[RMDB]
RNA sequence: GGGAACGACUCGAGUAGAGUCGAAAAGAUAUGGAAUCUGAUAGCAAGGCUAAAUGUACUUCUUUUGUAUUCGGAAACGAAUACAAAAGAAGUACAUUUCAGCUGAUGACCUAUAGAUUCCUAAGUCCACCGGAUUAUACUUCGGUAUAAUCCGGUGAAAAGAAACAACAACAACAAC
Reactivity to DMS in 0.01 (KOAc 150mM, MgCl2 10mM, bicine 150mM(pH8.5), 24C), signal-to-noise 2, nucleotides 027 to 126: g010a050u000a300u040g000g000a000a010u000c000u000g040a050u000a010g040c030a250a180g000g030c000u000a010a040a020u000g000u020a030c000u010u000c000u010u000u000u000g010u000a000u000u000c000g000g000a270a100a220c000g000a050a000u000a000c000a000a000a000a000g000a000a000g010u000a000c000a000u020u000u010c270a010g050c010u000g010a300u010g000a160c300c010u000a030u000a040g030a010u000u000c000c000u010a040a090g010u000c020